[RMDB]
RNA sequence: GGGAACGACUCGAGUAGAGUCGAAAAAUUCGAUGUAUACCUUAGUGACCCGCACUACACUGAGAAAGUAGCAAUUUACUAUGCGAAGCUAGUAAAUUAGCGGAUUUCGAGGUGGAGUCAGAUUACGUUGUAGGGGCACUUUCGAGUGCCCCUACAAAAAAGAAACAACAACAACAAC
Reactivity to 2A3 in 0.01 (KOAc 150mM, MgCl2 10mM, bicine 150mM(pH8.5), 24C), signal-to-noise 1, nucleotides 027 to 126: a020u010u000c000g000a010u050g080u120a020u020a020c000c010u000u030a000g010u000g120a180c010c000c060g000c060a000c000u000a000c000a000c000u000g000a000g010a040a000a000g040u080a000g090c030a000a010u000u100u000a000c000u010a060u300g070c010g130a180a070g060c000u000a000g000u000a000a000a020u000u000a040g000c010g060g250a000u040u020u000c020g010a000g000g080u000g000g000a000g000u000c000a010g000a260u070u220a080c080g080
Reactivity to DMS in 0.01 (KOAc 150mM, MgCl2 10mM, bicine 150mM(pH8.5), 24C), signal-to-noise 1, nucleotides 027 to 126: a180u010u000c020g030a020u000g000u010a180u000a040c020c000u010u000a000g000u000g040a120c030c000c040g000c050a020c020u000a020c000a000c020u020g040a300g000a010a020a000g000u010a110g000c000a000a000u000u000u000a000c020u000a000u090g050c000g000a220a100g050c030u050a000g000u000a000a000a000u000u000a070g000c020g000g010a300u000u000u000c000g000a300g000g020u000g000g030a000g000u000c020a230g020a050u000u040a140c300g010